This 177-nucleotide RNA was probed chemically with 2A3. Reactivities are given for positions 27 through 126. The RNA was probed in 150 mM KOAc, 10 mM MgCl2 and 150 mM bicine (pH 8.5) at 24 C.

RNA sequence: GGGAACGACUCGAGUAGAGUCGAAAAGAAAGCGGGUUCGUAAAGCCUGGGAGUGCUGGGCCUCUGUGAGGCGCCCAAUCCGGCAUAGAACCGGUGGUUAUCGGCGCCCAGGGUGAGCCCGCCUUAAUGUGUUGCGUAGGUUCGCCUACGCAACACAAAAAGAAACAACAACAACAAC
Reactivity to 2A3 in 0.01 (KOAc 150mM, MgCl2 10mM, bicine 150mM(pH8.5), 24C), signal-to-noise 1, nucleotides 027 to 126: g120a010a240a000g070c000g000g000g000u000u000c000g040u000a000a000a170g300c000c000u000g000g000g190a220g110u300g210c000u000g000g000g000c000c000u000c030u130g150u150g210a030g060g000c020g300c000c000c000a000a000u000c000c010g000g000c140a300u300a200g010a050a020c000c000g030g000u000g000g050u130u020a030u180c100g020g010c000g050c000c000c000a000g000g030g000u030g000a000g000c000c000c000g000c000c000u000u040a030a000